[RMDB]
RNA sequence: GGGAACGACUCGAGUAGAGUCGAAAAAAAUCCAGAGUGGGAAUUAGUGGUAUCCUGAGUAAUACAUCACACGUGGAACGAUGUAUGAACCCGCGCGGACCACCGCGCAAGGCUAAAUACUAGUUGGAUGAGAUACCUUCUUCGGAAGGUAUCUCAUAAAAGAAACAACAACAACAAC
Reactivity to DMS in 0.01 (KOAc 150mM, MgCl2 10mM, bicine 150mM(pH8.5), 24C), signal-to-noise 3, nucleotides 027 to 126: a020a100a060u020c000c000a090g010a160g000u000g010g000g000a060a030u000u030a040g000u040g000g000u010a120u000c000c020u000g010a100g010u000a100a010u010a020c030a000u000c010a090c120a170c140g010u020g020g000a060a110c260g010a050u010g000u040a010u000g010a020a180c100c020c120g010c030g000c000g000g010a140c250c300a070c000c020g000c010g010c000a070a010g010g010c110u000a030a030a060u030a020c050u020a030g010u020u000g010g000
Reactivity to 2A3 in 0.01 (KOAc 150mM, MgCl2 10mM, bicine 150mM(pH8.5), 24C), signal-to-noise 1, nucleotides 027 to 126: a000a000a000u070c060c020a060g010a000g040u150g040g000g090a130a090u110u040a060g100u060g100g090u120a100u060c000c000u000g020a030g000u070a040a010u030a050c010a030u020c030a000c030a000c170g210u230g090g030a070a030c040g000a010u100g000u000a010u020g000a000a000c050c010c030g000c000g000c000g000g000a030c030c090a200c000c000g100c000g000c000a030a000g060g000c000u100a060a050a000u210a160c030u030a000g000u020u100g060g080